[RMDB]
RNA sequence: GGGAACGACUCGAGUAGAGUCGAAAAGUUAUCCUGCAAGCAUGCCGCCCACAGAUCGAAUCCGGGGAACUUGCCGUGCAGGCGCUUCUUGAUGGUGCAAGCGUUGUGCGUCAUGUACUCCAGCUUGCGGCUGGUGAACGCGAACUGCUGCUUGGCGCAUCCGCUAGAUGUUCGCAUCUAGCGGAUGAAAAGAAACAACAACAACAAC
Reactivity to 2A3 in 0.01 (KOAc 150mM, MgCl2 10mM, bicine 150mM(pH8.5), 24C), signal-to-noise 1, nucleotides 027 to 156: g070u040u120a110u150c000c030u040g030c010a000a000g000c020a010u120g060c000c030g030c030c030c000a150c010a000g120a110u150c080g070a100a050u000c060c030g000g020g020g000a050a160c010u010u020g000c060c000g060u030g000c010a010g190g000c100g000c010u060u100c010u110u070g150a090u150g060g040u090g040c100a000a010g000c020g010u040u020g020u040g000c020g000u070c050a030u120g010u040a040c020u050c020c000a030g020c010u030u130g050c050g030g030c020u090g000g110u040g090a070a020c070g000c000g020a210a090c100u140g000c010u010g020c010u020u050g040g000c080g000